RNA sequence: GGGAACGACUCGAGUAGAGUCGAAAAGAUAUGGAUAUAGGGAGCUGGUAGUCGGAAACGACUACACAGCAUCGAUCUAUCAUCCUAAGUCAAAACAGGGCUCUAAGGUUCGCCUUAGAGCCCUGAAGAUUCUGUCAUUGUUCGCAAUGACAGAAUCAAAAGAAACAACAACAACAAC
Reactivity to DMS in 0.01 (KOAc 150mM, MgCl2 10mM, bicine 150mM(pH8.5), 24C), signal-to-noise 1, nucleotides 027 to 126: g010a040u000a290u000g000g000a020u000a010u000a020g000g000g000a030g000c020u010g040g010u000a000g000u000c020g010g010a060a100a120c000g030a010c000u000a000c010a070c000a010g020c010a240u010c140g000a120u010c010u000a000u000c220a010u000c010c000u000a020a150g010u020c020a100a080a100a260c020a000g000g000g040c000u000c000u000a010a010g010g010u000u000c300g000c000c000u000u010a000g010a010g010c000c000c000u010g020a010a050